[RMDB]
Overview: Chemical mapping of a 207-nucleotide RNA with DMS and 2A3. The RNA was probed in 150 mM KOAc, 10 mM MgCl2 and 150 mM bicine (pH 8.5) at 24 C. For DMS the reverse transcriptase was MarathonRT. The 2A3 profile rests on 3,634 reads. The DMS profile rests on 2,779 reads.

RNA sequence: GGGAACGACUCGAGUAGAGUCGAAAAUUACGCAACCGGAAUAAACACCAGGCGUGAUGUAACCGCCACGGCUACCAGUAAUCUGACCGCCCAUUGAUUUACUAAUCAUUUCCAGGCGAACUUUGCCAGCGUCAUUAAGGAUCUGAAAUUCAUCAUCCUCCAUAACUUGGUUCGCCAAGUUAUGGAGAAAAGAAACAACAACAACAAC
Reactivity to DMS in 0.01 (KOAc 150mM, MgCl2 10mM, bicine 150mM(pH8.5), 24C), signal-to-noise 2, nucleotides 027 to 156: u010u000a020c030g010c000a060a090c010c000g010g020a140a180u000a080a090a080c060a170c040c040a070g010g050c050g000u010g020a100u000g000u010a070a070c050c050g050c020c060a080c000g010g020c000u010a090c050c050a140g020u000a070a030u000c050u010g000a100c060c000g030c020c010c050a240u000u000g000a110u010u000u010a110c110u010a080a070u000c000a070u000u000u000c060c040a300g030g030c040g000a040a040c070u020u010u000g050c050c030a160g010c070g020u000c030a120u000u010a050a060g010g020a040u000c000u000g000a050a150a130u000u000c040a090u000c080a300u010c040
Reactivity to 2A3 in 0.01 (KOAc 150mM, MgCl2 10mM, bicine 150mM(pH8.5), 24C), signal-to-noise 6, nucleotides 027 to 156: u050u040a020c030g010c020a070a150c100c080g010g060a110a060u150a140a170a000c080a040c050c000a020g000g020c010g020u030g010a050u050g050u080a060a030c020c010g020c040c030a050c030g020g000c010u050a050c040c040a010g030u090a060a120u050c060u050g070a080c010c040g040c030c000c020a030u010u070g040a040u030u070u110a130c110u120a050a060u030c010a020u040u040u060c040c030a000g000g010c030g040a060a090c060u110u150u190g030c030c010a010g020c010g050u010c010a010u080u150a080a040g030g010a020u000c020u030g080a070a090a100u200u070c020a050u040c000a030u030c080